[RMDB]
RNA sequence: GGGAACGACUCGAGUAGAGUCGAAAAUGAAAGAGUAGGAAACUCGAAUAAAUAAGUGGUAAUCCUAGCGAAUCCACGGCGAGGAAACUAGGACACUAACCAUGUGAUCCCGGACGCUAGAAAAAAACUACUAUUUGGAGUUCGCUCCAAAUAGUAGAAAAGAAACAACAACAACAAC
Reactivity to DMS in 0.01 (KOAc 150mM, MgCl2 10mM, bicine 150mM(pH8.5), 24C), signal-to-noise 2, nucleotides 027 to 126: u010g000a160a050a130g000a030g000u000a120g050g010a080a130a120c030u000c020g010a100a110u010a090a070a050u010a080a100g010u000g000g000u000a090a150u000c030c000u000a000g000c010g000a230a180u010c010c000a080c150g000g020c120g000a060g000g000a080a090a080c000u000a010g000g040a060c130a050c090u000a100a100c070c040a030u000g000u000g000a060u000c000c000c020g000g010a130c130g010c090u000a040g010a000a000a050a110a060a050a090
Reactivity to 2A3 in 0.01 (KOAc 150mM, MgCl2 10mM, bicine 150mM(pH8.5), 24C), signal-to-noise 2, nucleotides 027 to 126: u130g060a060a050a070g000a000g030u070a070g040g300a160a300a070c000u010c030g030a020a020u100a180a090a010u150a130a010g010u000g060g000u020a070a050u000c010c000u010a010g000c020g010a010a030u020c000c010a060c190g130g000c240g020a010g000g030a010a020a040c000u010a000g000g020a010c020a010c190u060a050a040c000c000a000u090g040u040g040a080u000c000c000c000g040g070a040c000g000c060u150a030g100a070a140a020a000a030a020a020
This 177-nucleotide RNA was probed chemically with DMS and 2A3. For 2A3, 1,295 sequencing reads were counted. The reactions ran in a buffer of 150 mM KOAc, 10 mM MgCl2 and 150 mM bicine (pH 8.5), at 24 C. It was measured as part of the RMDB library M2PK90. In probing experiments dimethyl sulfate is read out at A N1 and C N3, which are open when not base-paired. 2A3 adducts were read by reverse transcription with SuperScript II with manganese.